[RMDB]
RNA sequence: GGGAACGACUCGAGUAGAGUCGAAAAGAUAUGGACUUUAGGGAUGGCAAUGAUGACUCUCGGAAACGAGAGUUUGAGCCACCCUGAAAGUCCUAAGUCAAAAUCCAGGAAGUUCGCUUCCUGGAAACAUUCCGAAGAAGUUCGCUUCUUCGGAAUGAAAAGAAACAACAACAACAAC
Reactivity to 2A3 in 0.01 (KOAc 150mM, MgCl2 10mM, bicine 150mM(pH8.5), 24C), signal-to-noise 2, nucleotides 027 to 126: g030a020u100a070u180g000g000a000c010u020u020u020a030g100g010g250a300u240g060g010c080a290a300u160g030a000u070g020a110c010u000c010u020c010g000g010a110a080a020c000g020a020g000a010g030u000u000u000g000a020g010c030c000a030c020c010c000u020g030a000a000a000g000u000c000c000u000a030a020g000u000c020a000a150a050a280u010c000c000a000g000g010a000a000g010u100u200c220g040c200u000u000c000c000u010g010g120a010a000a000
Reactivity to DMS in 0.01 (KOAc 150mM, MgCl2 10mM, bicine 150mM(pH8.5), 24C), signal-to-noise 3, nucleotides 027 to 126: g010a040u010a300u010g020g010a010c010u000u000u010a230g000g010g020a090u010g030g030c000a170a180u000g030a150u000g010a010c010u010c000u000c000g020g020a120a080a190c000g000a020g000a000g000u000u000u000g000a110g020c000c000a030c020c000c000u000g000a030a030a020g000u000c010c000u000a020a060g000u000c050a110a070a140a160u000c000c010a010g000g010a020a000g020u000u000c300g010c000u000u000c000c000u000g000g000a000a020a060

This 177-nucleotide RNA was probed chemically with 2A3 and DMS. The 2A3 profile rests on 2,690 reads. 2A3 adducts were read by reverse transcription with SuperScript II with manganese. It was measured as part of the RMDB library TTRDES.